[RMDB]
RNA sequence: GGGAACGACUCGAGUAGAGUCGAAAAUCUAGGGUUCCGCAUGUCAAUUGACAUGGACUGGUCCGAGAGAAAACACAUUCGCGUAAAUAGAAGCGCGUAUGCACACGGAGGGAAAAAAGCCCGGGAGAAUGGGAUUAUUAGUUCGCUAAUAAUCCAACAAAUUCUCCAGAUUCGUCUGGAGAAUUUGAAAAGAAACAACAACAACAAC
Reactivity to 2A3 in 0.01 (KOAc 150mM, MgCl2 10mM, bicine 150mM(pH8.5), 24C), signal-to-noise 1, nucleotides 027 to 156: u030c020u020a060g000g000g000u010u010c000c020g070c010a000u000g000u010c010a150a300u200u300g000a000c000a000u010g000g020a030c030u050g000g000u020c000c000g000a010g000a000g000a010a070a000a010c050a000c000a020u040u040c010g000c010g030u110a170a200a060u180a230g180a250a060g000c000g010c010g020u030a020u000g020c070a010c000a000c070g050g010a050g020g020g000a000a300a010a000a080a000g000c030c010c030g040g050g020a000g000a020a060u190g080g050g000a000u000u000a000u000u000a000g030u020u030c150g050c070u000a000a000u000a000a000u000c000c000a010a000

Structure probing data (2A3) for a 207-nucleotide construct.
Conditions: 150 mM KOAc, 10 mM MgCl2 and 150 mM bicine (pH 8.5), 24 C.
Values cover nucleotides 27 to 156.